RNA sequence: GGGAACGACUCGAGUAGAGUCGAAAACAAUGUCAACGGACAGUGUCAACACUGUCAUCCCGACGACGAAGAAUGGACAGAAAAUAUGGCCAAGGACAUACUGCAUACACGUCAGGGCGAACCAGAAAUCCGCUAGAUGGUUCGCCAUCUAGCGGAUAAAAGAAACAACAACAACAAC
Reactivity to DMS in 0.01 (KOAc 150mM, MgCl2 10mM, bicine 150mM(pH8.5), 24C), signal-to-noise 5, nucleotides 027 to 126: c160a100a070u010g010u020c070a070a080c260g000g030a030c000a000g000u000g010u050c260a160a160c020a020c000u000g000u020c020a090u000c020c020c020g000a080c130g000a070c040g000a100a050g000a130a020u010g000g000a070c020a100g010a130a080a080a110u020a070u010g000g000c000c020a050a070g010g010a050c030a030u000a080c100u030g000c020a070u010a090c100a080c060g030u000c040a100g000g000g000c060g020a040a060c130c050a090g010a030a070
Reactivity to 2A3 in 0.01 (KOAc 150mM, MgCl2 10mM, bicine 150mM(pH8.5), 24C), signal-to-noise 7, nucleotides 027 to 126: c060a020a150u160g070u170c060a080a040c090g100g000a010c000a010g020u010g030u160c110a130a110c020a100c020u010g000u000c010a000u020c000c000c020g050a040c030g010a000c030g050a040a060g060a130a090u120g040g070a020c040a040g160a090a120a030a010u190a070u060g060g000c040c050a040a050g080g010a010c020a040u080a060c030u030g030c010a010u030a100c040a010c050g050u030c050a030g000g010g000c030g020a030a010c020c000a010g070a070a110
Conditions: 150 mM KOAc, 10 mM MgCl2 and 150 mM bicine (pH 8.5), 24 C. The record gives the reactivity of an RNA of 177 nucleotides to DMS and 2A3. DMS adducts were read by reverse transcription with MarathonRT. The DMS profile rests on 7,548 reads. Reactivities are given for positions 27 through 126.